[RMDB]
RNA sequence: GGGAACGACUCGAGUAGAGUCGAAAAGUUUGAGACCAAGUCUCUCAAGAUUACUACGACAGGGAUGGAGGUUGAUGGAUCAAAAGAAGACACCGAUGAAAGCACUCAGGACAAAGUAUGUGCCAUCGAGUUUUUCGUUAUUCGUAACGAAAAACUCAAAAGAAACAACAACAACAAC
Reactivity to DMS in 0.01 (KOAc 150mM, MgCl2 10mM, bicine 150mM(pH8.5), 24C), signal-to-noise 2, nucleotides 027 to 126: g000u000u000u020g010a140g000a050c060c080a130a180g020u000c120u000c000u000c030a030a130g010a090u000u010a120c140u000a070c070g010a130c140a040g010g000g000a020u010g010g020a080g010g020u000u010g000a080u000g030g020a100u020c020a060a030a070a080g000a060a090g000a060c110a040c070c010g000a050u000g000a070a070a170g000c030a020c030u000c110a080g000g000a070c130a060a060a080g000u010a040u000g020u000g010c010c040a060u000c080
Reactivity to 2A3 in 0.01 (KOAc 150mM, MgCl2 10mM, bicine 150mM(pH8.5), 24C), signal-to-noise 1, nucleotides 027 to 126: g060u120u100u050g010a030g000a020c000c040a090a040g060u000c000u000c020u020c040a050a000g000a050u110u200a060c090u100a050c050g130a040c060a020g070g140g000a050u160g020g060a000g050g000u030u040g030a050u040g060g000a050u050c030a030a050a000a070g060a090a010g050a040c010a000c080c010g040a050u060g040a150a030a010g000c010a000c090u090c090a020g170g000a030c060a040a170a010g010u090a100u110g090u070g030c000c000a060u090c070